[RMDB]
RNA sequence: GGGAACGACUCGAGUAGAGUCGAAAACGAUGCAUAUCGAUGCAUUAAUCGAUGCUAGCGCUAAUCGCGCGAUGCGCAUAUUAUAUAGCGCGCAUUAGCAUGCGCGCAUAUUAGCUAGCGCCGAUGCGCUGGCUAAGGUGUUCGCACCUUAGCCAGCAAAAGAAACAACAACAACAAC
Reactivity to DMS in 0.01 (KOAc 150mM, MgCl2 10mM, bicine 150mM(pH8.5), 24C), signal-to-noise 5, nucleotides 027 to 126: c110g010a040u000g010c000a030u000a120u020c170g010a090u000g000c020a020u010u000a120a030u000c010g010a040u000g010c010u000a030g000c010g000c240u010a060a070u010c230g010c020g010c020g020a060u020g020c010g040c090a090u000a080u000u000a060u000a050u000a090g050c020g020c000g030c000a020u000u000a170g020c300a120u000g010c010g000c000g000c080a000u000a010u000u000a090g000c000u000a040g000c000g020c040c040g010a030u000g020c150
Reactivity to 2A3 in 0.01 (KOAc 150mM, MgCl2 10mM, bicine 150mM(pH8.5), 24C), signal-to-noise 5, nucleotides 027 to 126: c040g020a020u030g000c050a010u220a070u290c160g230a030u050g020c010a020u030u140a090a030u020c010g010a010u020g010c010u000a000g000c020g000c130u120a090a040u120c080g000c020g000c040g130a120u210g000c010g000c030a010u060a050u260u130a040u040a020u040a070g000c030g000c010g000c060a010u090u130a060g080c130a040u060g000c030g000c000g000c010a000u000a020u020u040a000g000c010u000a000g000c000g010c020c010g020a010u060g060c060